[RMDB]
RNA sequence: GGGAACGACUCGAGUAGAGUCGAAAAUUCGACAGGUAACUUGCUAUGAACUCAUCUUUUUUGGUUACACCACAAUGGCUGGCAGAACAUAUUGAUGAUACCAACAUCGUUAUUCUGGAUGCCAGAAAUGAAAAACUGGUUUCGACCAGUUUUUCAUAAAAGAAACAACAACAACAAC
Reactivity to DMS in 0.01 (KOAc 150mM, MgCl2 10mM, bicine 150mM(pH8.5), 24C), signal-to-noise 2, nucleotides 027 to 126: u010u000c050g030a150c080a030g000g000u020a050a070c020u020u000g020c050u020a080u000g010a070a090c140u000c060a040u010c000u000u000u000u000u000u030g030g040u000u000a080c100a200c030c020a080c220a150a090u000g020g010c010u010g010g010c040a020g000a070a020c110a030u000a010u010u000g030a030u000g000a150u010a120c220c170a090a140c050a020u000c040g010u000u000a090u000u000c040u000g000g000a170u000g000c030c030a020g000a040a070
Reactivity to 2A3 in 0.01 (KOAc 150mM, MgCl2 10mM, bicine 150mM(pH8.5), 24C), signal-to-noise 1, nucleotides 027 to 126: u050u030c080g010a000c010a030g100g020u030a050a040c010u040u080g000c030u030a030u140g100a120a020c010u000c070a020u080c050u070u210u010u030u080u110g080g000u070u080a050c070a010c040c010a020c090a100a100u090g010g000c000u000g050g040c030a000g050a100a020c040a090u060a010u070u170g020a010u000g000a010u070a110c010c000a010a060c030a000u030c010g050u030u000a070u110u030c010u030g050g020a010u060g010c000c010a000g040a010a140